This 177-nucleotide RNA was probed chemically with 2A3 and DMS. Values cover nucleotides 27 to 126. It was measured as part of the RMDB library TTRDEL. For 2A3, 2,441 sequencing reads were counted.

RNA sequence: GGGAACGACUCGAGUAGAGUCGAAAAGAUAUGGACGGAGCAACAGCUGGUGUGUCGGAAACGACACCCAGACAUGCUCCGUGUCCUAAGUCAAACAAGUGUGGAGACUUCGGUCUCCACACUUGAACCUAGCUUUGAGGUUCGCCUCAAAGCUAGGAAAAGAAACAACAACAACAAC
Reactivity to 2A3 in 0.01 (KOAc 150mM, MgCl2 10mM, bicine 150mM(pH8.5), 24C), signal-to-noise 1, nucleotides 027 to 126: g040a020u080a040u160g000g000a000c000g000g000a000g000c010a020a180c070a220g040c010u000g030g010u290g020u010g010u220c010g030g000a030a040a030c000g020a010c000a000c020c000c010a010g030a010c000a010u020g030c020u000c000c020g000u010g000u010c000c000u020a080a010g040u040c030a150a000a110c000a050a130g000u020g000u000g020g000a010g000a000c000u070u060c280g020g000u030c000u000c000c010a000c020a000c020u000u010g000a000a000
Reactivity to DMS in 0.01 (KOAc 150mM, MgCl2 10mM, bicine 150mM(pH8.5), 24C), signal-to-noise 3, nucleotides 027 to 126: g010a060u000a260u000g000g010a060c000g000g000a010g020c020a020a110c300a160g000c010u000g020g000u020g020u000g010u000c010g030g010a090a040a170c000g000a000c000a000c000c000c000a000g010a040c070a170u000g010c000u010c010c010g010u000g010u000c000c000u000a050a150g020u010c030a110a110a270c010a020a010g010u010g030u010g010g010a010g000a010c000u000u010c220g040g000u000c000u000c000c000a000c000a000c000u000u000g010a060a110